[RMDB]
Chemical mapping of a 177-nucleotide RNA with DMS and 2A3. DMS adducts were read by reverse transcription with MarathonRT. The reactions ran in a buffer of 150 mM KOAc, 10 mM MgCl2 and 150 mM bicine (pH 8.5), at 24 C. For 2A3, 2,307 sequencing reads were counted. Values cover nucleotides 27 to 126. In probing experiments dimethyl sulfate is read out at A N1 and C N3, which are open when not base-paired.
RNA sequence: GGGAACGACUCGAGUAGAGUCGAAAAGAUAUGGACCUGAUAGACAUGCUCCCUAGUCGGAAACGACUAUGGGAGCAACAGCUAUAGGUCCUAAGUCAAAACGGUGUCAGCUUCGGCUGACACCGAACCCUAGGGAAGAGUUCGCUCUUCCCUAGGGAAAAGAAACAACAACAACAAC
Reactivity to DMS in 0.01 (KOAc 150mM, MgCl2 10mM, bicine 150mM(pH8.5), 24C), signal-to-noise 1, nucleotides 027 to 126: g000a010u000a070u010g020g000a010c010c010u000g000a040u000a020g000a060c010a300u000g030c000u010c000c000c000u010a010g010u000c000g030g010a030a030a040c000g020a010c010u010a020u000g020g050g000a000g070c000a010a000c140a040g000c040u000a010u010a050g010g020u010c000c000u010a010a070g000u000c020a090a120a100a190c010g010g010u000g000u020c010a000g020c000u000u010c300g020g000c000u000g020a000c000a000c000c000g000a000a010
Reactivity to 2A3 in 0.01 (KOAc 150mM, MgCl2 10mM, bicine 150mM(pH8.5), 24C), signal-to-noise 1, nucleotides 027 to 126: g010a000u010a000u050g020g000a000c000c000u070g240a090u010a010g040a050c240a300u300g000c000u020c000c000c000u020a000g000u000c000g000g030a060a020a010c000g000a000c000u040a130u300g000g000g000a000g040c000a000a010c000a000g000c020u010a000u010a020g030g000u000c000c020u010a000a000g000u000c000a000a000a140a120c050g100g000u000g000u030c020a010g000c010u140u220c300g110g000c000u020g010a010c000a000c000c000g000a010a000